[RMDB]
RNA sequence: GGGAACGACUCGAGUAGAGUCGAAAAUCUCUCUCUUUUGAUAUCUUCUUUUCUCGAUCUCCUAGCUUGAUCUUUUGAUCUCUCAAAUCGAUCUUAAGAAAAAGAUCAGUCAAAGAGAUGAGAGUAGGGUAACAUAACAGUUCGCUGUUAUGUUACCAAAAGAAACAACAACAACAAC
Reactivity to 2A3 in 0.01 (KOAc 150mM, MgCl2 10mM, bicine 150mM(pH8.5), 24C), signal-to-noise 3, nucleotides 027 to 126: u000c000u000c000u000c000u010c010u040u110u090u100g060a040u090a130u160c050u090u020c020u020u130u020u000c010u000c030g060a030u000c020u000c030c030u020a030g030c030u030u090g010a010u020c000u040u130u040u150g020a020u010c010u000c010u020c050a080a130a070u110c040g010a000u000c000u040u190a190a070g040a090a100a010a000a000g000a000u010c010a000g010u000c010a020a020a000g010a010g000a010u080g020a020g000a010g010u030a060g040
Reactivity to DMS in 0.01 (KOAc 150mM, MgCl2 10mM, bicine 150mM(pH8.5), 24C), signal-to-noise 2, nucleotides 027 to 126: u000c030u000c010u010c040u000c020u000u000u000u000g020a060u000a100u000c030u010u000c010u000u000u000u010c020u010c230g010a030u000c000u000c120c030u000a300g000c090u010u000g010a010u000c000u010u000u010u010g010a020u000c000u000c080u010c120a040a120a130u000c150g000a010u000c040u020u020a120a080g000a050a030a030a020a010g000a020u000c040a030g000u000c030a010a040a170g000a020g000a030u010g000a030g000a050g020u020a100g020
This 177-nucleotide RNA was probed chemically with 2A3 and DMS. Reactivities are rounded to 0.1 and cut off at 0 and 3. 2A3 adducts were read by reverse transcription with SuperScript II with manganese. Values cover nucleotides 27 to 126. DMS adducts were read by reverse transcription with MarathonRT. The DMS profile rests on 1,584 reads. As a SHAPE reagent, 2A3 marks flexible, mostly unpaired nucleotides at the ribose 2'-OH. For 2A3, 3,554 sequencing reads were counted.